[RMDB]
Chemical mapping of a 177-nucleotide RNA with DMS and 2A3. Values cover nucleotides 27 to 126. The reactions ran in a buffer of 150 mM KOAc, 10 mM MgCl2 and 150 mM bicine (pH 8.5), at 24 C.

RNA sequence: GGGAACGACUCGAGUAGAGUCGAAAAAGGGAGCCUGAGAGACGGCUACCAGGUCCAAGGACAGCAGCAGGCGCGAAAAUUACCGCAGCCUGCGUUCAGGGCGGUAGUAAGGAGACGUGAAAACAAUGUCGUUAGAAUUAUUCGUAAUUCUAACGACAAAAGAAACAACAACAACAAC
Reactivity to DMS in 0.01 (KOAc 150mM, MgCl2 10mM, bicine 150mM(pH8.5), 24C), signal-to-noise 4, nucleotides 027 to 126: a120g010g000g000a020g010c030c030u000g000a140g010a140g000a140c160g020g020c010u010a030c080c030a100g000g020u010c030c000a090a120g020g020a080c060a110g010c120a110g000c010a030g000g010c000g000c020g000a080a050a070a110u050u010a080c170c010g010c010a100g030c000c020u000g010c030g030u020u010c080a110g000g000g010c020g020g000u020a020g000u020a040a090g010g000a050g010a050c070g030u020g010a080a040a060a040c160a100a090u040
Reactivity to 2A3 in 0.01 (KOAc 150mM, MgCl2 10mM, bicine 150mM(pH8.5), 24C), signal-to-noise 4, nucleotides 027 to 126: a000g060g040g010a040g030c030c060u080g040a050g020a010g010a050c110g010g000c000u030a050c010c000a030g010g110u000c000c020a020a040g040g020a040c040a060g030c010a010g010c000a000g080g000c000g000c010g140a030a060a110a090u270u160a120c080c020g000c020a030g000c020c010u010g010c010g000u000u000c010a010g000g000g010c000g040g020u040a010g020u030a050a070g050g020a040g020a040c020g050u060g070a040a080a010a020c050a050a060u050